[RMDB]
RNA sequence: GGGAACGACUCGAGUAGAGUCGAAAAGAAGGAUAGUUCGCUAUCCUUCAAAGCCACCGAAAGGCAAAUGUGUUAGAUGCCCUCUAACACAUAAACCGGGCAAAACAGUACCGUUCGCGGUACUGAACAUUAACAAAGGCUUCGGCCUUUGUUAAUGAAAAGAAACAACAACAACAAC
Reactivity to DMS in 0.01 (KOAc 150mM, MgCl2 10mM, bicine 150mM(pH8.5), 24C), signal-to-noise 5, nucleotides 027 to 126: g010a010a010g000g000a010u000a000g010u000u010c250g020c010u000a000u000c000c000u000u000c000a040a100a130g000c030c030a070c110c100g010a080a120a080g010g020c020a050a240a010u000g010u000g000u010u000a000g000a050u010g010c250c190c080u000c000u000a000a010c000a010c000a000u000a010a140a100c030c020g000g000g030c120a090a050a080a140c010a000g000u000a000c000c010g020u000u010c190g020c000g000g010u000a010c000u000g000a040a120
Reactivity to 2A3 in 0.01 (KOAc 150mM, MgCl2 10mM, bicine 150mM(pH8.5), 24C), signal-to-noise 3, nucleotides 027 to 126: g010a010a000g000g010a000u010a010g010u030u030c110g000c080u000a000u010c010c000u000u010c000a000a000a000g010c010c000a050c030c090g170a140a060a040g010g000c040a090a100a110u010g000u010g000u010u010a010g000a030u280g040c010c060c000u010c000u010a000a000c000a000c000a000u010a010a010a000c010c020g000g080g000c070a060a060a030a050c000a000g000u000a010c020c000g020u030u050c240g000c010g070g000u000a000c000u000g000a000a010